Annotation:
This 207-nucleotide RNA was probed chemically with 2A3. For 2A3, 418 sequencing reads were counted. Conditions: 150 mM KOAc, 10 mM MgCl2 and 150 mM bicine (pH 8.5), 24 C.

[RMDB]
RNA sequence: GGGAACGACUCGAGUAGAGUCGAAAAAUAAAAAGGAAAACUUCCAAUUGUAUGAGAGGGUCAUUAAAUGUAAUUGGAAUGAGAUGGCUGAUGUGGGGCAAGCUUUUGUGAUUAUGGUUCCAGGGGAAAUUGAGAUAUAUGACUUUUCUUAUGAAAAAGUAUGCCCAUCAUUCGUGAUGGGCAUACUAAAAGAAACAACAACAACAAC
Reactivity to 2A3 in 0.01 (KOAc 150mM, MgCl2 10mM, bicine 150mM(pH8.5), 24C), signal-to-noise 1, nucleotides 027 to 156: a010u160a000a020a020a010a040g110g010a070a250a080a100c040u050u030c010c010a050a060u050u050g070u010a070u100g040a010g000a030g010g010g010u020c100a090u160u090a000a070a050u100g020u070a010a010u040u070g000g000a000a040u070g030a070g030a080u060g010g030c040u000g000a000u130g040u010g010g000g020g100c070a030a010g100c080u050u060u280u230g060u020g080a030u000u170a070u150g020g000u060u040c010c020a030g000g020g000g000a150a000a000u250u160g050a060g080a110u080a020u050a030u200g030a000c000u060u070u020u110c000u050u130a080u150g060a020a000a210a000